RNA sequence: GGGAACGACUCGAGUAGAGUCGAAAAGAAGGAGAUGAAAGCGACUUUAGAAUCGGCUAACUGAGCAGGCAGAUUCAGACGGCAAGUAUCGUCGCCAGAGAUACAGUCGCAAAUAGCCGAAGGAGAACCUACCACCAGUAUUCGUACUGGUGGUAGGAAAAGAAACAACAACAACAAC
Reactivity to DMS in 0.01 (KOAc 150mM, MgCl2 10mM, bicine 150mM(pH8.5), 24C), signal-to-noise 5, nucleotides 027 to 126: g010a120a090g000g010a080g010a060u000g000a060a100a130g020c020g010a060c020u000u010u020a130g010a080a080u010c020g020g000c000u000a060a140c120u000g000a060g030c060a120g000g010c060a030g000a130u000u020c030a050g000a300c040g000g020c010a060a090g010u020a040u020c040g010u000c080g010c070c060a040g010a100g000a040u000a020c070a080g010u020c010g010c070a060a050a120u030a050g010c010c000g000a080a060g000g000a180g010a120a170
Reactivity to 2A3 in 0.01 (KOAc 150mM, MgCl2 10mM, bicine 150mM(pH8.5), 24C), signal-to-noise 6, nucleotides 027 to 126: g110a040a020g070g040a080g010a050u120g100a070a070a000g030c020g020a030c020u090u110u110a090g060a090a070u030c020g020g010c020u020a090a040c020u050g040a030g030c060a060g090g000c000a010g020a050u060u040c010a020g030a060c050g020g000c060a110a060g040u040a060u080c030g040u030c050g050c070c010a030g030a000g000a060u040a040c030a000g010u010c000g010c020a040a060a040u040a000g010c000c020g010a030a020g090g040a060g030a030a020